[RMDB]
RNA sequence: GGGAACGACUCGAGUAGAGUCGAAAAGAUAUGGACAUUCAUCAGCCUAAAAGUCUCCGAUAAGCGUAUGUCGGAAACGACAUAACGCUUUUGACGGAGUCGCUAGGCUGAUGAAUGUCCUAAGUCACGAAAUAUUUAUCUUCGGAUAAAUAUUUCGAAAAGAAACAACAACAACAAC
Reactivity to DMS in 0.01 (KOAc 150mM, MgCl2 10mM, bicine 150mM(pH8.5), 24C), signal-to-noise 3, nucleotides 027 to 126: g020a040u000a300u000g000g000a010c020a010u000u000c000a010u000c000a020g010c000c000u010a000a080a230a230g000u000c000u000c000c010g020a170u000a000a020g010c010g010u000a020u000g000u010c000g000g000a090a060a210c010g000a010c010a020u000a060a070c010g020c010u000u000u000u010g010a210c110g020g000a020g010u000c000g020c300u010a020g000g010c010u000g000a000u000g000a000a000u000g010u000c000c000u000a000a100g010u010c060a260
An RNA of 177 nucleotides, treated with DMS and read out base by base. Source: RMDB library TTRINS, as collected in RNAgym. The reactions ran in a buffer of 150 mM KOAc, 10 mM MgCl2 and 150 mM bicine (pH 8.5), at 24 C. Reactivities are given for positions 27 through 126.